This 207-nucleotide RNA was probed chemically with 2A3. The RNA was probed in 150 mM KOAc, 10 mM MgCl2 and 150 mM bicine (pH 8.5) at 24 C. The 2A3 profile rests on 457 reads. Values cover nucleotides 27 to 156. It was measured as part of the RMDB library OK3TST.
RNA sequence: GGGAACGACUCGAGUAGAGUCGAAAACUUAAAUACCAUUUGCCUUUUGGUAAGCUAAUCAUUUCACUGACUUGGAAAGGAAACCUCUUCUUGGCCUGACAGCUUGUAGCUGGAAUUCUACACUGGCCACUCUGGUUGGGAUUGUCAUUUGGCUGGACCCGUACUACGGGUUCGCCCGUAGUACGGGAAAAGAAACAACAACAACAAC
Reactivity to 2A3 in 0.01 (KOAc 150mM, MgCl2 10mM, bicine 150mM(pH8.5), 24C), signal-to-noise 1, nucleotides 027 to 156: c030u070u040a110a040a040u140a080c010c010a070u070u060u210g060c020c020u040u070u020u000g050g030u020a020a000g000c090u110a090a060u060c060a150u060u080u060c050a060c060u080g120a020c020u110u160g020g000a110a060a020g090g040a060a050a020c020c020u040c060u130u000c000u000u090g020g050c000c010u060g020a110c030a000g020c060u130u120g120u160a020g000c040u030g020g100a020a000u180u000c060u100a020c020a030c050u050g010g010c030c000a050c010u100c070u040g010g070u000u050g010g020g000a070u030u110g020u050c050a030u040u030u070g100g010c010u000g030g040a070